[RMDB]
RNA sequence: GGGAACGACUCGAGUAGAGUCGAAAAGUCAUUUUCGAAUGACGAGAGAGAUAUGGAGUAGCUAGUCGCUAGGACAGCUAAGACAGAAUUUCGGAAACGAAAUUUCGAGCUGUCUAGCGAGGCUACUCCUAAGUCGAGGUUUUGUGUUCGCACAAAAGUUAUACAAUAUCUUCGGAUAUUGUAUAACAAAAGAAACAACAACAACAAC
Reactivity to DMS in 0.01 (KOAc 150mM, MgCl2 10mM, bicine 150mM(pH8.5), 24C), signal-to-noise 3, nucleotides 027 to 156: g010u010c000a030u000u000u000u010c240g040a060a020u000g000a030c000g020a140g020a090g000a250g010a100u000a300u010g030g030a020g020u010a000g000c000u000a070g020u000c020g030c010u000a050g070g010a020c000a000g020c010u010a100a110g020a220c300a090g000a030a020u000u010u000c000g010g000a180a150a300c010g020a010a000a050u000u000u010c050g000a030g030c000u000g010u000c000u000a020g030c010g030a020g010g010c010u000a000c000u010c010c000u000a010a070g030u000c010g010a130g010g010u000u000u000u020g010u000g010u070u000c110g030c060a050c060a030a060a060a250
Reactivity to 2A3 in 0.01 (KOAc 150mM, MgCl2 10mM, bicine 150mM(pH8.5), 24C), signal-to-noise 4, nucleotides 027 to 156: g010u000c000a000u010u020u080u210c240g150a050a010u000g000a000c070g000a010g000a010g010a010g010a050u040a050u180g000g000a000g010u000a000g000c010u050a070g260u030c010g000c010u010a040g120g200a050c000a000g000c040u080a110a030g150a030c080a090g090a020a000u000u000u000c030g040g000a100a080a040c010g020a010a020a020u120u130u090c030g020a010g000c000u000g000u000c010u000a010g010c000g000a000g010g000c000u000a000c000u000c000c000u000a000a000g000u020c020g010a100g090g000u030u040u060u070g010u020g040u030u090c130g080c140a030c100a130a050a010a040
Structure probing data (DMS and 2A3) for a 207-nucleotide construct. For DMS the reverse transcriptase was MarathonRT. The DMS profile rests on 6,988 reads. Conditions: 150 mM KOAc, 10 mM MgCl2 and 150 mM bicine (pH 8.5), 24 C. The 2A3 profile rests on 3,840 reads. DMS (dimethyl sulfate) methylates the pairing face of unpaired adenines and cytosines. It was measured as part of the RMDB library RNAMAK.